[RMDB]
This 207-nucleotide RNA was probed chemically with 2A3 and DMS. Values are in units of 0.01, from 0 to 300, in steps of 10. For DMS, 2,517 sequencing reads were counted. For DMS the reverse transcriptase was MarathonRT. The reactions ran in a buffer of 150 mM KOAc, 10 mM MgCl2 and 150 mM bicine (pH 8.5), at 24 C. For 2A3, 1,374 sequencing reads were counted.
RNA sequence: GGGAACGACUCGAGUAGAGUCGAAAAGUCCCUGUUUCGACAGGGACCUCAGAUCCUAAGUCGAGCUAGCUAGAGGGAGAGCAUCGGAAACGAUGCUCAUCGAUCUCUACAUGCUUGGACCUCGAUAUGGAGUACGCGGACGAAUUCGUUCGUCCAAAAGUUAAAACGCAUUCGUGCGUUUUAACUUAAAAGAAACAACAACAACAAC
Reactivity to 2A3 in 0.01 (KOAc 150mM, MgCl2 10mM, bicine 150mM(pH8.5), 24C), signal-to-noise 2, nucleotides 027 to 156: g020u000c000c000c010u010g020u000u150u030c160g070a010c000a000g000g030g000a000c000c000u030c000a170g030a150u000c010c020u070a190a020g020u000c000g010a000g030c020u020a010g010c030u020a010g020a000g020g000g000a050g000a000g020c000a000u000c000g000g030a110a050a000c020g000a000u000g010c000u010c000a020u050c000g000a020u020c000u030c000u010a110c060a140u180g030c010u010u070g020g100a040c030c010u020c020g010a010u010a070u230g010g020a000g100u170a140c140g050c060g140g060a000c000g000a030a000u120u080c240g020u070u010c000g020u110c040c040a030a180
Reactivity to DMS in 0.01 (KOAc 150mM, MgCl2 10mM, bicine 150mM(pH8.5), 24C), signal-to-noise 1, nucleotides 027 to 156: g010u000c000c010c000u000g020u020u000u000c220g040a190c000a080g040g000g020a000c010c000u010c060a230g000a140u000c010c010u000a030a130g030u000c000g010a040g000c010u010a150g080c130u000a020g020a030g030g020g010a060g000a050g030c000a000u020c000g030g020a190a090a260c040g030a010u000g000c000u040c000a030u000c030g000a060u000c000u000c020u000a050c070a080u000g000c010u020u000g030g010a060c050c000u030c080g010a150u000a130u020g000g000a120g000u010a050c090g030c090g000g000a000c000g030a020a100u000u000c220g000u010u010c030g010u000c000c010a020a120